[RMDB]
RNA sequence: GGGAACGACUCGAGUAGAGUCGAAAAUUACAAAAUUACUCUGCUGUUGCUUGUGUCUCCUGCACACGCACACCCGUACUGGUCCAGGUGCCAGGACAAACAUCAGAUAUCACCUACUUGGCACAUCACUUCGUGAAUUUACCAGCACCUAAGUUAAGAGGUACUCGUGAUUCGUCACGAGUACCUCAAAAGAAACAACAACAACAAC
Reactivity to 2A3 in 0.01 (KOAc 150mM, MgCl2 10mM, bicine 150mM(pH8.5), 24C), signal-to-noise 1, nucleotides 027 to 156: u140u050a050c040a000a070a000a110u120u060a120c050u060c010u040g100c040u030g120u250u050g000c040u000u030g010u000g000u000c040u010c010c060u080g070c000a020c010a000c000g000c020a010c000a010c020c010c030g000u040a060c070u100g000g000u020c070c000a110g030g000u030g000c010c000a020g000g040a000c010a000a130a010c000a160u120c020a040g050a040u010a040u260c060a090c070c010u070a070c030u070u090g020g010c000a030c010a040u060c020a010c040u050u040c020g010u000g040a040a020u030u030u010a040c070c030a000g070c080a040c000c000u010a010a090g100u140u010a120a000